Structure probing data (DMS and 2A3) for a 177-nucleotide construct.
2A3 adducts were read by reverse transcription with SuperScript II with manganese.
For DMS, 869 sequencing reads were counted.
The data come from the RNA Mapping Database (RMDB), library OK2TRN.
For DMS the reverse transcriptase was MarathonRT.
[RMDB]
RNA sequence: GGGAACGACUCGAGUAGAGUCGAAAAUCUGUUUACAAGUUAUCGUUAAGUGCAUGUCUGACUACGAUUCCGUAAACAGAAGCCAGUUUGCGUCAAGUCCGACAUGCACUCUUGGCAGAACUGAUCACCACUCAGUACGGUUCGCCGUACUGAGUGGAAAAGAAACAACAACAACAAC
Reactivity to DMS in 0.01 (KOAc 150mM, MgCl2 10mM, bicine 150mM(pH8.5), 24C), signal-to-noise 1, nucleotides 027 to 126: u000c030u010g040u000u000u000a080c050a070a120g010u010u000a070u030c140g000u000u030a070a030g010u000g000c000a020u000g000u010c000u000g070a050c040u020a220c140g010a130u010u010c150c030g020u000a000a000a030c000a010g010a070a110g050c170c100a050g010u000u000u010g000c000g050u000c100a050a040g000u000c020c060g000a020c010a050u000g000c000a020c000u000c000u000u000g000g010c040a150g000a000a070c070u000g020a060u010c170a170
Reactivity to 2A3 in 0.01 (KOAc 150mM, MgCl2 10mM, bicine 150mM(pH8.5), 24C), signal-to-noise 1, nucleotides 027 to 126: u000c010u000g050u020u130u120a060c040a100a060g020u130u040a190u270c140g030u090u120a040a070g000u000g040c000a010u020g030u000c010u020g000a010c010u070a100c090g030a040u160u000c090c020g020u000a020a020a000c020a020g140a020a020g110c020c010a050g010u000u020u010g030c030g020u000c030a020a000g010u060c000c000g020a030c020a000u000g000c000a000c000u000c010u020u000g030g000c020a060g020a040a040c020u070g040a080u180c040a020